[RMDB]
RNA sequence: GGGAACGACUCGAGUAGAGUCGAAAAACUCAUGACAAACGUGAUCUCCAACGUUCAUUGUGGAAAAUAGCCUCAAGGAUGAGAUGAUGAGGAUUUUGAAGAUGGGUCUUAAGAGAAAACACUGAGGUCCCUCGAAGAUGAAGAAAUCCUCAUGAAAUAAAUUACUACGUUUCGACGUAGUAAUUUAAAAAGAAACAACAACAACAAC
Reactivity to 2A3 in 0.01 (KOAc 150mM, MgCl2 10mM, bicine 150mM(pH8.5), 24C), signal-to-noise 4, nucleotides 027 to 156: a000c020u020c030a050u080g070a060c090a060a100a020c030g030u020g030a070u040c060u030c100c050a110a090c020g020u030u030c040a140u080u070g020u080g050g060a130a110a080a100u130a110g080c000c000u020c040a020a030g070g020a080u060g020a040g030a070u180g030a000u020g010a010g010g010a000u000u010u010u060g090a100a080g050a030u060g010g010g000u000c010u040u100a210a010g020a010g040a030a260a030a010c070a020c020u010g000a010g000g020u040c010c010c000u000c010g040a070a060g110a090u170g030a040a080g010a010a020a000u000c000c000u010c010a000u020g010a040a020a000
Reactivity to DMS in 0.01 (KOAc 150mM, MgCl2 10mM, bicine 150mM(pH8.5), 24C), signal-to-noise 4, nucleotides 027 to 156: a070c030u000c030a060u010g010a090c070a040a040a040c020g020u010g010a130u010c050u010c100c030a150a070c040g020u000u000c030a110u000u010g030u000g000g000a090a060a040a090u000a130g020c030c020u000c030a060a150g010g000a170u000g010a080g000a150u010g020a020u000g020a040g010g010a050u000u010u000u000g010a080a090g010a080u000g010g040g010u010c010u000u000a040a080g000a140g000a140a090a110a110c100a110c060u000g000a070g010g000u000c010c000c030u010c050g030a090a110g000a100u010g010a120a300g010a030a040a030u010c010c020u000c010a030u000g010a040a030a140